[RMDB]
RNA sequence: GGGAACGACUCGAGUAGAGUCGAAAACUUGAUGGUGCAAGCGUUGUGCGUCAUGUACUCCAGCUUGCGGCUGGUGAACGCGAACUGCUGCUUGGCGAUGAUCAGGGUGUCGAUCACCUUGAACGGUCGCGGCGGCGGCAUCUUGUUCAGGAAGAACAUAAAGGCUCAUUUUCGAAUGAGCCUUUAUAAAAGAAACAACAACAACAAC
Reactivity to 2A3 in 0.01 (KOAc 150mM, MgCl2 10mM, bicine 150mM(pH8.5), 24C), signal-to-noise 2, nucleotides 027 to 156: c050u040u040g040a040u060g110g160u080g000c010a030a050g050c020g080u010u010g000u040g020c030g140u110c120a270u300g010u010a030c000u030c040c010a040g000c010u050u140g050c050g070g010c000u000g030g090u060g080a010a000c010g000c040g060a080a050c000u000g040c000u000g030c000u010u240g180g000c020g000a030u130g010a050u010c010a010g030g030g050u000g050u070c130g080a180u240c000a000c000c000u020u000g010a070a030c110g060g000u010c010g000c010g050g020c020g000g010c030g000g020c000a070u020c050u070u110g000u010u020c000a000g090g030a110a140g010a030a020c050
Reactivity to DMS in 0.01 (KOAc 150mM, MgCl2 10mM, bicine 150mM(pH8.5), 24C), signal-to-noise 1, nucleotides 027 to 156: c080u000u000g020a070u010g040g010u010g020c010a010a030g010c050g060u010u000g010u000g010c040g040u010c130a130u010g040u000a050c020u010c000c000a050g000c000u000u000g030c070g030g010c060u000g000g020u000g010a060a040c000g050c240g020a110a060c020u010g010c000u010g000c040u000u010g040g010c020g010a040u000g010a140u000c010a000g000g000g000u000g000u000c230g030a300u000c000a020c000c010u000u000g010a020a080c120g030g020u000c020g040c020g000g000c000g000g010c000g000g000c030a090u000c060u010u020g010u010u010c000a120g000g010a140a170g000a100a150c160